Chemical mapping of a 177-nucleotide RNA with DMS and 2A3. The reactions ran in a buffer of 150 mM KOAc, 10 mM MgCl2 and 150 mM bicine (pH 8.5), at 24 C. For DMS, 16,983 sequencing reads were counted. For 2A3 the reverse transcriptase was SuperScript II with manganese.
[RMDB]
RNA sequence: GGGAACGACUCGAGUAGAGUCGAAAAAUUGCAGUCCGGCAGACAUGCCCCAGCUAUUACGUUCAUCCAGCGUAUCGUUCCACGACAUGCGGUGUAUGGUGCUGUGGCUACUGUUUUGCAUGUCAUAUGAACACAAAGAUUUCGAUCUUUGUGUUCAAAAAGAAACAACAACAACAAC
Reactivity to DMS in 0.01 (KOAc 150mM, MgCl2 10mM, bicine 150mM(pH8.5), 24C), signal-to-noise 8, nucleotides 027 to 126: a070u000u010g000c030a070g010u010c070c060g000g000c020a020g010a100c130a070u010g000c020c010c030c020a040g010c030u000a070u010u010a080c050g010u000u000c090a050u010c050c040a110g030c010g030u000a060u000c020g010u000u000c120c100a090c080g000a020c050a040u000g010c030g010g000u000g010u000a020u000g010g000u000g010c010u010g010u000g010g000c010u000a060c050u000g000u000u000u020u000g020c010a030u000g010u010c060a090u010a150
Reactivity to 2A3 in 0.01 (KOAc 150mM, MgCl2 10mM, bicine 150mM(pH8.5), 24C), signal-to-noise 5, nucleotides 027 to 126: a000u110u070g030c020a020g050u050c040c030g020g000c020a000g080a140c050a050u130g010c000c000c000c010a010g000c030u050a070u240u160a090c070g030u020u090c020a060u060c040c030a030g020c030g000u010a020u050c040g020u100u090c100c080a060c050g000a020c000a040u030g010c040g020g020u020g010u030a020u020g060g020u080g030c020u010g000u050g080g000c020u020a020c020u020g050u030u070u110u060g000c010a020u040g020u040c000a010u090a060